An RNA of 177 nucleotides, treated with DMS and 2A3 and read out base by base.
RNA sequence: GGGAACGACUCGAGUAGAGUCGAAAAUGCGACCGUGGCCAAGUUGGCUGCCGCGGGCGGUUCGUCGUGCCUGGACCCGAUGGAAGUACCCGGCAAGGGCUUCAUGAGCCUGGCGGUCGAUCCGUCGGUCUAGACUGCGUUUCGACGCAGUCUAGACAAAAGAAACAACAACAACAAC
Reactivity to DMS in 0.01 (KOAc 150mM, MgCl2 10mM, bicine 150mM(pH8.5), 24C), signal-to-noise 2, nucleotides 027 to 126: u010g020c030g010a060c040c090g020u030g000g030c030c030a100a180g020u000u010g030g010c030u000g000c010c000g020c110g010g000g010c070g000g000u000u000c030g010u000c020g040u010g000c020c060u000g010g000a090c060c050c050g000a020u000g010g020a040a110g000u000a140c030c010c020g030g010c130a100a130g000g000g010c020u010u010c230a110u010g010a030g000c020c000u000g000g030c010g000g000u010c040g000a030u010c030c000g020u000c050g020
Reactivity to 2A3 in 0.01 (KOAc 150mM, MgCl2 10mM, bicine 150mM(pH8.5), 24C), signal-to-noise 1, nucleotides 027 to 126: u150g010c000g020a020c000c000g040u070g050g000c030c230a250a220g300u210u060g110g000c040u010g010c060c000g050c070g000g030g000c000g000g030u020u060c010g030u000c020g030u040g010c030c150u060g010g050a170c000c060c040g020a030u070g040g000a000a050g010u180a220c000c010c000g000g000c060a100a070g070g000g000c010u050u070c100a120u170g060a010g000c000c010u020g030g080c000g000g000u010c020g000a030u000c000c040g060u050c070g040
The RNA was probed in 150 mM KOAc, 10 mM MgCl2 and 150 mM bicine (pH 8.5) at 24 C.